[RMDB]
RNA sequence: GGGAACGACUCGAGUAGAGUCGAAAAACAAUAGUGUCUCUCUUAUUACAUUAUAAUGCGGAUGAUACCUCUAUAUUUCCGUUAUACGUUAACUCUGCUAUUGUUCGUAUAUUGAUAUCUCAUGGUAAACUUCAUGUACUUUCGAGUACAUGAAGUUAAAAGAAACAACAACAACAAC
Reactivity to DMS in 0.01 (KOAc 150mM, MgCl2 10mM, bicine 150mM(pH8.5), 24C), signal-to-noise 8, nucleotides 027 to 126: a040c050a050a040u000a050g010u000g010u000c050u000c050u000c050u000u000a130u000u000a060c050a070u010u010a070u000a040a070u010g010c090g010g010a020u010g000a300u000a110c070c050u010c040u010a100u010a130u010u010u010c040c050g000u000u000a040u000a050c210g000u010u010a030a050c060u000c050u000g010c030u000a030u000u000g010u010u000c060g010u010a060u000a160u010u000g010a090u000a060u000c030u000c040a080u010g010g000u000a060
Reactivity to 2A3 in 0.01 (KOAc 150mM, MgCl2 10mM, bicine 150mM(pH8.5), 24C), signal-to-noise 7, nucleotides 027 to 126: a000c030a010a030u040a030g020u020g100u040c020u010c000u000c020u140u130a130u110u120a080c020a040u050u150a100u130a190a110u120g010c030g010g010a010u030g010a000u070a110c010c030u070c050u040a040u020a030u180u060u000c010c000g010u040u030a040u010a040c050g000u010u030a070a030c030u030c070u130g000c000u040a030u050u040g020u030u010c020g050u040a050u020a030u120u090g070a020u020a030u090c050u010c040a050u110g100g060u140a110
Structure probing data (DMS and 2A3) for a 177-nucleotide construct. For 2A3 the reverse transcriptase was SuperScript II with manganese. It was measured as part of the RMDB library OK2TST.